[RMDB]
RNA sequence: GGGAACGACUCGAGUAGAGUCGAAAAAACAAGAUAAGCAGGCAAUUAAGACCUGGCUGGAGCAUGCUAAUCAGACCAUUCACCCCUAGGCCUCUAAUUCCUGGCUCUCUUAGCUCUCCAACAGUCCGUUAACCGGAUUUUUCGAAAUCCGGUUAACAAAAGAAACAACAACAACAAC
Reactivity to DMS in 0.01 (KOAc 150mM, MgCl2 10mM, bicine 150mM(pH8.5), 24C), signal-to-noise 1, nucleotides 027 to 126: a060a130c110a140a100g010a060u020a100a040g030c060a000g020g030c040a120a090u010u000a140a070g000a050c100c050u000g000g000c050u010g010g010a080g000c170a010u000g000c010u000a070a030u000c120a060g000a100c100c020a090u010u010c100a300c050c010c020c010u000a060g010g010c080c000u000c090u010a050a090u020u000c000c000u000g010g000c060u000c070u000c010u010u000a090g010c010u000c010u010c020c050a010a060c040a070g010u000c160c080
An RNA of 177 nucleotides, treated with DMS and read out base by base. The reactions ran in a buffer of 150 mM KOAc, 10 mM MgCl2 and 150 mM bicine (pH 8.5), at 24 C. For DMS, 649 sequencing reads were counted. DMS adducts were read by reverse transcription with MarathonRT.